RNA sequence: GGGAACGACUCGAGUAGAGUCGAAAAGGAAGACUUAAGAUGGCGGCGUUUGCACGGAGUGCAAUCACUGCGUCCUUACGGGGGUUGCAAGGCGUCCGAAGUAUGAGUCCACUAACAAAAGUCCAGAAUGUGACUAUAAAUUCGUUUAUAGUCACAUAAAAGAAACAACAACAACAAC
Reactivity to 2A3 in 0.01 (KOAc 150mM, MgCl2 10mM, bicine 150mM(pH8.5), 24C), signal-to-noise 9, nucleotides 027 to 126: g060g020a040a050g020a010c030u060u060a080a070g050a080u090g170g040c030g010g000c020g010u010u020u020g020c020a020c080g190g100a170g020u020g010c030a010a030u090c020a020c060u060g020c020g020u050c010c010u030u040a080c070g020g000g010g010g020u050u080g030c060a060a050g070g000c030g270u030c010c010g030a020a010g020u080a070u150g010a000g010u000c010c010a040c050u110a140a020c050a070a080a030a010g040u020c020c000a020g090a100
Reactivity to DMS in 0.01 (KOAc 150mM, MgCl2 10mM, bicine 150mM(pH8.5), 24C), signal-to-noise 9, nucleotides 027 to 126: g000g000a110a110g010a060c030u010u010a080a130g000a050u020g010g030c000g010g010c050g000u000u000u000g010c000a030c020g010g020a140g020u000g000c030a020a020u010c030a030c010u000g010c010g010u010c030c030u010u010a100c060g020g000g010g010g020u000u000g010c180a080a100g000g000c030g010u010c020c010g010a050a040g000u010a070u020g000a050g010u000c010c030a210c050u010a070a100c200a070a070a090a110g000u000c010c030a110g010a210
Structure probing data (2A3 and DMS) for a 177-nucleotide construct. The data come from the RNA Mapping Database (RMDB), libraries RFM100 and RFMREP. Values cover nucleotides 27 to 126. The reactions ran in a buffer of 150 mM KOAc, 10 mM MgCl2 and 150 mM bicine (pH 8.5), at 24 C. 2A3 adducts were read by reverse transcription with SuperScript II with manganese.